[RMDB]
Structure probing data (DMS and 2A3) for a 177-nucleotide construct.

RNA sequence: GGGAACGACUCGAGUAGAGUCGAAAAGGCCGACGAAGAUGGCGUUCGUGCUGGCGCUCGCUUGCGUCGGCUUCCUCGCUUCGGACUUCGCUUGCGCGCAGCGCCCGGAACAUGGCGCCGCGCCGUCAGGUGCUCUGACAUUCGUGUCAGAGCACCUAAAAGAAACAACAACAACAAC
Reactivity to DMS in 0.01 (KOAc 150mM, MgCl2 10mM, bicine 150mM(pH8.5), 24C), signal-to-noise 1, nucleotides 027 to 126: g000g000c000c000g000a010c020g010a130a060g000a050u040g010g010c020g060u000u000c060g050u060g040c070u020g000g000c010g000c050u060c120g080c000u000u000g020c020g030u010c000g000g030c000u000u000c000c000u030c210g030c060u020u000c030g000g000a150c100u000u000c090g000c000u030u000g000c100g080c000g000c100a050g000c030g020c010c070c020g040g050a260a120c120a210u040g020g000c000g030c020c020g000c000g000c000c060g000u080c150
Reactivity to 2A3 in 0.01 (KOAc 150mM, MgCl2 10mM, bicine 150mM(pH8.5), 24C), signal-to-noise 2, nucleotides 027 to 126: g060g050c000c010g000a010c010g030a010a000g070a090u070g080g000c010g000u110u140c070g010u300g100c070u170g050g000c000g000c020u100c110g070c030u030u070g140c020g000u000c000g000g000c000u020u000c000c010u000c000g020c030u060u080c040g070g020a090c000u000u000c120g060c080u100u210g040c070g020c020g000c010a000g000c010g020c000c010c010g010g070a070a050c070a130u150g030g020c010g000c000c000g000c020g000c020c000g010u010c050
Values are in units of 0.01, from 0 to 300, in steps of 10. The data come from the RNA Mapping Database (RMDB), library RFM100. Reactivities are given for positions 27 through 126. DMS adducts were read by reverse transcription with MarathonRT. For 2A3 the reverse transcriptase was SuperScript II with manganese.